RNA sequence: GGGAACGACUCGAGUAGAGUCGAAAAGCAUAUAUCGUAGCCGUAGCGCCGCGCGUACGUAUAUAUACGAUAUGCGCAUAUGCAUCGCGUAGCCGCGUAUAAUGCAUGCGCGCCGAUAUCGGCGCCGCCAUGGCAAGGACUUCGGUCCUUGCCAUGGAAAAGAAACAACAACAACAAC
Reactivity to DMS in 0.01 (KOAc 150mM, MgCl2 10mM, bicine 150mM(pH8.5), 24C), signal-to-noise 2, nucleotides 027 to 126: g010c020a040u000a070u000a010u010c010g050u000a100g010c020c010g000u020a160g000c080g030c190c210g000c010g010c010g060u010a010c000g010u000a060u020a090u010a090u000a040c020g000a100u000a010u010g000c000g020c020a070u010a070u010g020c040a120u000c080g030c010g030u010a140g000c050c040g030c000g000u010a030u000a050a070u000g000c020a090u000g010c090g010c000g020c010c050g020a200u010a090u000c010g000g020c010g030c000c130g000
Reactivity to 2A3 in 0.01 (KOAc 150mM, MgCl2 10mM, bicine 150mM(pH8.5), 24C), signal-to-noise 3, nucleotides 027 to 126: g050c020a010u090a020u010a020u170c030g010u030a010g030c020c010g050u050a020g070c040g020c080c050g020c020g010c000g010u000a010c010g020u020a080u010a010u020a000u020a080c030g060a150u000a010u070g000c000g000c030a000u060a010u130g040c020a060u110c100g000c010g080u110a010g070c070c020g000c000g010u040a010u040a080a080u030g000c020a020u100g080c070g020c000g000c040c000g120a100u120a080u300c010g020g000c010g000c000c000g020